[RMDB]
RNA sequence: GGGAACGACUCGAGUAGAGUCGAAAAGACGAGCAGGCCGAUAAUCUUGUGCAGUAUGCAUGCUCGUAACUCCAGCGCACAAGUGGAGGCACAAGAUUUGAAUCCAGCAUAGCGCAGGAGCCGCAGAGGCAGCGUAAUACUUCGGUAUUACGCUGCCAAAAGAAACAACAACAACAAC
Reactivity to DMS in 0.01 (KOAc 150mM, MgCl2 10mM, bicine 150mM(pH8.5), 24C), signal-to-noise 1, nucleotides 027 to 126: g000a010c000g000a020g000c000a040g020g050c000c240g040a060u020a030a090u000c000u060u000g000u000g030c010a180g000u070a070u060g010c000a030u000g000c060u000c000g020u000a040a130c000u000c000c000a150g100c000g020c050a190c140a000a030g000u060g000g050a100g000g070c000a040c020a020a000g000a140u050u030u070g020a090a100u020c100c000a000g080c180a120u000a150g040c000g000c000a160g000g000a020g020c010c040g000c290a180g040a240
Reactivity to 2A3 in 0.01 (KOAc 150mM, MgCl2 10mM, bicine 150mM(pH8.5), 24C), signal-to-noise 1, nucleotides 027 to 126: g100a000c000g010a040g000c000a030g050g070c040c000g030a190u060a130a040u000c000u000u000g020u000g000c000a010g030u070a000u100g010c030a000u020g000c000u000c000g000u000a000a000c000u000c000c000a000g030c030g010c040a060c010a300a000g020u020g030g010a030g030g060c000a000c000a000a000g030a010u010u060u070g050a000a000u090c120c000a000g130c020a080u090a130g000c030g000c040a040g050g000a020g120c040c000g040c030a000g070a080